Structure probing data (DMS and 2A3) for a 207-nucleotide construct. High 2A3 reactivity points to a flexible backbone, as in loops and unpaired stretches.
RNA sequence: GGGAACGACUCGAGUAGAGUCGAAAAUCUAACACAAAUGCUGUUAUUGACUAUGACCAUGCUUACACUGUUAUGCGUUUGCAUAACUUUAGCAUUUCAGCUGGUAACAUCUAUUUGGGUGUUGUUAGUGCUACAAUGCAUGGUGCUAAUUUACAUACGUACCAGCAUAGUUCGCUAUGCUGGUACGAAAAGAAACAACAACAACAAC
Reactivity to DMS in 0.01 (KOAc 150mM, MgCl2 10mM, bicine 150mM(pH8.5), 24C), signal-to-noise 2, nucleotides 027 to 156: u000c020u010a130a150c080a140c040a060a090a090u000g020c040u000g010u000u010a030u000u000g000a070c090u000a140u000g030a090c050c050a000u000g000c000u010u000a120c090a170c080u010g020u000u000a000u000g010c030g000u000u000u000g170c000a010u000a000a020c000u000u000u030a050g010c010a140u010u010u020c100a300g030c000u010g000g010u000a010a040c000a010u010c020u000a170u000u010u000g010g000g080u010g010u000u010g000u000u020a020g020u000g020c040u010a080c150a080a080u000g020c040a060u000g030g070u000g020c020u000a110a080u000u010u000a060c020a080u000a140
Reactivity to 2A3 in 0.01 (KOAc 150mM, MgCl2 10mM, bicine 150mM(pH8.5), 24C), signal-to-noise 5, nucleotides 027 to 156: u060c010u040a070a030c010a020c050a090a210a110u180g060c120u010g040u160u030a090u070u120g110a120c070u100a130u230g070a010c010c010a000u010g000c010u090u070a100c080a040c110u060g000u020u000a010u010g010c070g240u100u190u300g000c020a000u000a000a000c000u000u030u000a010g000c010a010u040u050u140c030a000g000c000u000g010g020u030a000a000c000a000u000c020u090a250u250u240u300g130g000g000u020g010u050u000g020u000u020a040g000u030g100c020u020a090c100a120a090u130g020c020a020u020g000g000u010g010c010u020a050a070u070u180u250a070c060a030u040a040
DMS adducts were read by reverse transcription with MarathonRT. The RNA was probed in 150 mM KOAc, 10 mM MgCl2 and 150 mM bicine (pH 8.5) at 24 C.